Source: RMDB library 15KLIB, as collected in RNAgym.
Chemical mapping of a 170-nucleotide RNA with 2A3 and DMS.
DMS adducts were read by reverse transcription with MarathonRT.
Values cover nucleotides 27 to 129.
The DMS profile rests on 15,011 reads.
The reactions ran in a buffer of 150 mM KOAc, 10 mM MgCl2 and 150 mM bicine (pH 8.5), at 24 C.

RNA sequence: GGGAACGACUCGAGUAGAGUCGAAAAAGCCCGCCUCUCCUCGUCGGUGAAGUCUCCCGCGCGGGUCCUCUUCCUAGGUCCGGAAUCAACCUCCAUCCGAUCUGUCCGGAGCUUUUUCGGCGGAGGAAAAGGGUUCAGUUCGCUGAACCCAAAAGAAACAACAACAACAAC
Reactivity to 2A3 in 0.01 (KOAc 150mM, MgCl2 10mM, bicine 150mM(pH8.5), 24C), signal-to-noise 7, nucleotides 027 to 129: a000g040c020c000c010g030c010c020u050c000u020c010c000u020c010g150u010c040g120g000u060g030a020a000g050u020c010u030c030c020c000g020c010g000c030g040g000g030u030c000c000u020c000u060u060c000c020u010a030g010g040u000c060c020g020g030a020a040u110c040a050a110c000c010u000c020c010a080u040c030c020g040a070u030c020u070g080u030c020c020g010g000a040g030c040u090u070u010u030u050c010g000g000c020g040g000a030g030g000a010a020a020a040
Reactivity to DMS in 0.01 (KOAc 150mM, MgCl2 10mM, bicine 150mM(pH8.5), 24C), signal-to-noise 4, nucleotides 027 to 129: a090g000c030c000c000g030c050c030u000c070u040c040c020u020c050g050u040c000g000g000u030g020a080a140g050u060c040u050c050c030c080g050c110g030c000g000g020g080u020c000c000u080c080u000u000c020c010u000a090g050g020u010c000c030g060g010a030a020u080c100a010a010c080c020u000c040c040a150u000c030c050g030a060u040c090u030g040u080c080c100g040g000a020g030c170u060u070u040u040u000c040g020g040c260g020g050a050g030g040a020a020a030a020